[RMDB]
RNA sequence: GGGAACGACUCGAGUAGAGUCGAAAAAGCGGCGAGUCAUUGGUACGCCACUGACUCGCCGCAAUACGUUCAUCCUAAUUUAAUCAAAUUAGGACGGAAGUAGUCGUGAGACGAAGGAACGCAUUAAAAAACGUAGCGGUCUUCGGACCGCUACGAACUUAGCUAGUAUCUUCGGAUACUAGCUAAGAAAAGAAACAACAACAACAAC
Reactivity to DMS in 0.01 (KOAc 150mM, MgCl2 10mM, bicine 150mM(pH8.5), 24C), signal-to-noise 1, nucleotides 027 to 156: a140g060c020g030g010c000g010a050g010u020c050a040u010u030g000g010u010a070c300g030c080c020a080c050u000g000a030c030u000c000g010c040c030g050c000a000a000u000a010c030g000u000u000c010a140u000c000c000u010a020a000u000u000u010a180a160u000c150a030a010a010u000u000a010g010g000a050c050g040g000a030a100g000u000a210g010u010c010g000u000g010a300g000a120c030g030a200a150g010g010a030a010c000g010c030a150u010u010a000a050a070a090a060a120c000g030u000a050g000c020g050g000u000c020u000u000c210g000g040a020c000c020g050c010u000a000c010g000a010a000
Reactivity to 2A3 in 0.01 (KOAc 150mM, MgCl2 10mM, bicine 150mM(pH8.5), 24C), signal-to-noise 1, nucleotides 027 to 156: a000g030c000g000g000c030g000a010g000u000c000a040u000u030g000g010u100a130c250g040c030c000a010c020u010g010a000c000u000c000g020c020c000g000c000a000a000u010a020c000g000u000u010c000a020u010c010c000u000a000a010u000u020u050a180a290u250c190a080a000a000u000u000a020g010g000a020c010g010g000a000a010g000u000a010g000u000c020g020u050g150a060g000a020c020g000a000a000g000g000a020a020c000g000c010a010u110u300a070a100a090a030a000a040c000g000u000a000g000c000g010g000u000c000u010u090c160g050g010a000c000c010g010c000u010a000c000g000a000a000